[RMDB]
RNA sequence: GGGAACGACUCGAGUAGAGUCGAAAAUCCCAAAGCGGAUUUAGCUCGGUUGGGAGAGCGCCAGACCGAAGAUCUGGUUGUCCUGUGUUCGAUCCACAGAAUUCGCACCAUAAACAACGGGAGAUUCAGCUCCCACGGAGUUCGCUCCGUGGGAGCUAAAAGAAACAACAACAACAAC
Reactivity to 2A3 in 0.01 (KOAc 150mM, MgCl2 10mM, bicine 150mM(pH8.5), 24C), signal-to-noise 1, nucleotides 027 to 126: u000c000c000c070a000a050a030g000c030g000g020a000u020u050u180a030g020c000u000c010g050g000u200u170g130g170g000a080g000a000g010c000g020c000c000a000g000a000c000c090g300a140a030g040a210u000c000u000g000g040u050u080g000u120c000c030u090g000u000g000u040u000c060g010a000u000c000c000a000c000a050g000a020a010u000u000c000g000c000a040c000c000a000u130a050a120a040c040a020a080c060g000g020g000a000g000a090u150u080c010